[RMDB]
RNA sequence: GGGAACGACUCGAGUAGAGUCGAAAAGAUGUGGAAGAUGGUUCCGGAGAGAACGCAUCCGUGACCAGUGGAAAUGCAUCACCGCGUCGCGAUAACUCCAGUGAUGGCGCAACUGGUGCCGGCAGCACCCAUAGGUACUAUUCGUAGUACCUAUGGGAAAAGAAACAACAACAACAAC
Reactivity to DMS in 0.01 (KOAc 150mM, MgCl2 10mM, bicine 150mM(pH8.5), 24C), signal-to-noise 9, nucleotides 027 to 126: g010a040u000g020u000g010g020a140a120g010a090u000g010g010u000u000c170c010g010g010a070g000a150g010a080a090c170g010c090a110u000c020c020g010u010g000a040c010c010a040g000u010g010g000a070a090a090u010g000c050a040u000c010a120c060c050g010c100g010u000c040g010c070g010a120u000a080a140c080u000c030c030a050g010u000g000a080u000g010g000c040g020c060a120a060c060u000g000g010u000g010c040c030g010g000c070a070g010c120a190
Reactivity to 2A3 in 0.01 (KOAc 150mM, MgCl2 10mM, bicine 150mM(pH8.5), 24C), signal-to-noise 9, nucleotides 027 to 126: g020a030u060g020u070g070g080a070a050g060a130u050g020g000u060u030c030c010g030g010a050g000a010g010a110a030c090g000c120a060u000c010c010g030u050g010a020c000c010a020g030u070g080g080a070a110a050u180g020c010a020u020c010a010c020c030g020c030g040u030c020g000c020g020a040u050a170a070c030u020c030c010a010g010u030g070a110u110g050g020c030g000c030a020a040c030u030g020g000u020g040c020c000g020g000c020a030g030c010a060